[RMDB]
RNA sequence: GGGAACGACUCGAGUAGAGUCGAAAAGCAUAACUGUUCGCAGUUAUGCAAAACACGAAGCUGGAAACAGACGCAGUGAUACAAACAAAAGCGAAAACAAAAAAAGCCAACAGUUCGCUGUUGGCAAUCCAUUAAUAGACUUCGGUCUAUUAAUGGAAAAAGAAACAACAACAACAAC
Reactivity to DMS in 0.01 (KOAc 150mM, MgCl2 10mM, bicine 150mM(pH8.5), 24C), signal-to-noise 4, nucleotides 027 to 126: g000c000a010u000a000a000c000u000g000u000u000c080g020c000a060g000u010u000a010u000g000c000a030a020a070a050c040a020c030g010a130a300g010c010u010g020g010a170a090a190c020a040g000a030c060g030c110a190g010u000g010a090u010a100c060a080a080a100c120a060a040a090a060g000c010g000a020a040a100a100c170a030a020a060a080a060a130a130g000c000c000a000a000c000a010g010u000u030c250g020c010u010g030u000u000g000g000c010a020a010
Reactivity to 2A3 in 0.01 (KOAc 150mM, MgCl2 10mM, bicine 150mM(pH8.5), 24C), signal-to-noise 3, nucleotides 027 to 126: g000c010a010u010a010a000c010u020g040u070u040c080g010c030a010g000u010u000a000u010g000c000a020a050a000a020c030a000c000g040a050a020g030c000u010g000g030a090a100a000c020a030g120a090c030g060c090a010g000u020g020a030u040a150c050a030a170a020c040a030a090a040a050g040c030g030a010a050a050a060c120a040a210a000a010a010a010a010g010c010c000a000a000c000a000g030u070u080c140g050c140u000g010u000u000g020g000c010a000a000